[RMDB]
RNA sequence: GGGAACGACUCGAGUAGAGUCGAAAAUCAAGGCGUACGUCGAUGCGAUAGAUCAGUACGCUGCUGUUGCGGCGGACGUAGACCAGGCAGAGGUGGACGCGUGGGUCGAGUACUUCCAGAGCCACCAAAGUCUACUCGGAUUCGUCCGAGUAGACUUAAAAGAAACAACAACAACAAC
Reactivity to DMS in 0.01 (KOAc 150mM, MgCl2 10mM, bicine 150mM(pH8.5), 24C), signal-to-noise 2, nucleotides 027 to 126: u010c080a150a100g020g010c030g000u000a000c030g010u000c080g010a130u000g000c110g020a130u000a040g010a060u000c020a120g000u000a030c070g000c010u000g020c080u010g010u010u000g010c080g000g010c040g000g000a020c040g000u010a080g010a110c020c020a140g000g000c060a080g010a300g000g030u000g020g000a060c020g000c130g030u010g020g010g020u010c050g000a130g040u000a080c090u000u010c010c010a100g010a120g000c030c030a050c080c060a070
Reactivity to 2A3 in 0.01 (KOAc 150mM, MgCl2 10mM, bicine 150mM(pH8.5), 24C), signal-to-noise 1, nucleotides 027 to 126: u140c020a020a080g060g000c000g010u000a000c040g100u070c040g020a070u080g170c000g050a160u100a100g090a090u090c030a000g000u000a060c080g010c000u000g000c040u060g000u090u210g000c020g040g030c010g010g000a010c030g030u050a020g080a070c000c020a020g000g010c000a010g010a010g110g030u010g010g030a010c040g000c050g090u090g010g020g000u040c040g010a020g080u050a080c020u100u060c000c000a020g050a050g090c000c030a040c000c050a000
Source: RMDB library OK2TRN, as collected in RNAgym. Structure probing data (DMS and 2A3) for a 177-nucleotide construct. For DMS the reverse transcriptase was MarathonRT. Conditions: 150 mM KOAc, 10 mM MgCl2 and 150 mM bicine (pH 8.5), 24 C.